The data come from the RNA Mapping Database (RMDB), library OK3TST. The record gives the reactivity of an RNA of 207 nucleotides to 2A3. The reactions ran in a buffer of 150 mM KOAc, 10 mM MgCl2 and 150 mM bicine (pH 8.5), at 24 C. For 2A3, 1,747 sequencing reads were counted.
RNA sequence: GGGAACGACUCGAGUAGAGUCGAAAAGAUGGGUCCGAUGGAUUAAUGCGUCGCCCGCCAUUGGAUCCUGAUUGAUAGAUUGAGGGCGACGGUCGGAUCACUCGGUAAUUCGGUGCUCAACGAGUGAUCCGUGAUGAUAGUUAAGAGGAGCACCUAAAAUCAUAUAUCGGUUCGCCGAUAUAUGAUUAAAAGAAACAACAACAACAAC
Reactivity to 2A3 in 0.01 (KOAc 150mM, MgCl2 10mM, bicine 150mM(pH8.5), 24C), signal-to-noise 3, nucleotides 027 to 156: g060a030u080g030g000g000u000c000c000g000a010u000g000g000a030u110u180a260a090u300g110c000g000u000c000g010c000c000c000g000c000c000a010u010u000g000g000a000u000c000c010u010g040a080u070u130g030a030u060a220g100a130u050u200g110a080g000g000g010c000g000a000c000g000g020u010c000g010g000a000u000c000a000c010u000c000g030g000u120a100a060u100u100c010g020g010u010g000c000u000c040a040a020c000g000a000g000u000g000a000u000c000c000g000u000g000a020u030g000a020u070a140g150u190u180a170a040g090a040g090g060a000g000c000a000c000c000u020a030a040